[RMDB]
Description:
The record gives the reactivity of an RNA of 177 nucleotides to DMS and 2A3. DMS adducts were read by reverse transcription with MarathonRT. Values are in units of 0.01, from 0 to 300, in steps of 10. Conditions: 150 mM KOAc, 10 mM MgCl2 and 150 mM bicine (pH 8.5), 24 C.
RNA sequence: GGGAACGACUCGAGUAGAGUCGAAAACUGAAAGGCCGCUGCGGCAGCAGCCCAAUCGUGCUCGUUACGUGGUGAAUAUUCCAAAACCUCCACAUGUGGGGAGGCAAUUGGCGUGUCUUUCACUACAGACUAUUUAGCGGUUCGCCGCUAAAUAGUCAAAAGAAACAACAACAACAAC
Reactivity to DMS in 0.01 (KOAc 150mM, MgCl2 10mM, bicine 150mM(pH8.5), 24C), signal-to-noise 2, nucleotides 027 to 126: c070u000g000a040a080a040g000g000c030c000g050c000u010g010c030g020g020c300a100g000c000a060g000c010c020c050a030a050u000c020g020u000g050c020u000c040g000u020u010a090c080g010u020g000g000u010g000a070a070u100a030u030u030c120c100a100a030a060a230c140c010u000c010c020a050c000a040u060g000u010g070g010g000g010a020g000g000c040a010a040u000u000g000g000c230g020u010g030u000c030u000u050u000c020a090c050u000a070c110a120
Reactivity to 2A3 in 0.01 (KOAc 150mM, MgCl2 10mM, bicine 150mM(pH8.5), 24C), signal-to-noise 7, nucleotides 027 to 126: c030u040g020a000a000a020g030g020c010c000g000c030u020g010c010g110g020c050a060g000c010a000g010c010c010c000a040a060u070c050g080u160g170c010u020c080g300u050u080a070c020g000u000g000g010u040g020a110a060u130a120u130u180c040c020a050a080a110a190c020c000u010c020c000a040c070a130u290g050u220g090g030g010g010a000g010g010c010a050a080u010u010g020g020c120g010u190g010u050c000u010u020u010c010a040c040u080a060c040a020